The record gives the reactivity of an RNA of 177 nucleotides to DMS and 2A3. DMS adducts were read by reverse transcription with MarathonRT. High DMS reactivity at an A or C suggests that its Watson-Crick edge is free. Values cover nucleotides 27 to 126. As a SHAPE reagent, 2A3 marks flexible, mostly unpaired nucleotides at the ribose 2'-OH.
[RMDB]
RNA sequence: GGGAACGACUCGAGUAGAGUCGAAAAUGAUGUCCAUGUUUGUAUUAACGAGAGACUGGGAAAAACCCAAACUUCCAUCAGUCUGGAACUGGCUAGGACCCAUGUGCCAUCCACGCAAUGGGAAUACUCAGAUUAGCACAUUCGUGUGCUAAUCUGAAAAAGAAACAACAACAACAAC
Reactivity to DMS in 0.01 (KOAc 150mM, MgCl2 10mM, bicine 150mM(pH8.5), 24C), signal-to-noise 3, nucleotides 027 to 126: u010g000a100u010g010u000c030c050a070u000g020u000u000u000g020u010a090u010u020a080a080c160g020a220g010a060g010a010c040u000g000g000g000a020a010a040a080a110c030c010c020a030a080a070c160u000u010c010c010a120u020c020a030g020u000c020u000g000g020a080a070c060u010g000g000c060u010a090g020g010a140c020c030c000a050u010g010u000g010c020c050a080u000c050c100a110c140g000c040a050a040u000g020g000g000a140a090u000a050c150
Reactivity to 2A3 in 0.01 (KOAc 150mM, MgCl2 10mM, bicine 150mM(pH8.5), 24C), signal-to-noise 2, nucleotides 027 to 126: u120g030a060u100g000u000c010c000a040u180g000u000u040u060g120u060a220u140u100a170a060c060g000a020g020a020g000a200c020u000g070g000g000a010a010a070a110a100c010c030c000a010a060a030c080u030u020c010c000a060u120c000a100g060u000c000u030g010g010a060a010c030u030g020g010c000u010a080g080g070a130c010c000c050a040u090g020u050g220c020c010a030u100c000c000a030c060g020c020a020a070u020g000g080g030a040a040u070a100c010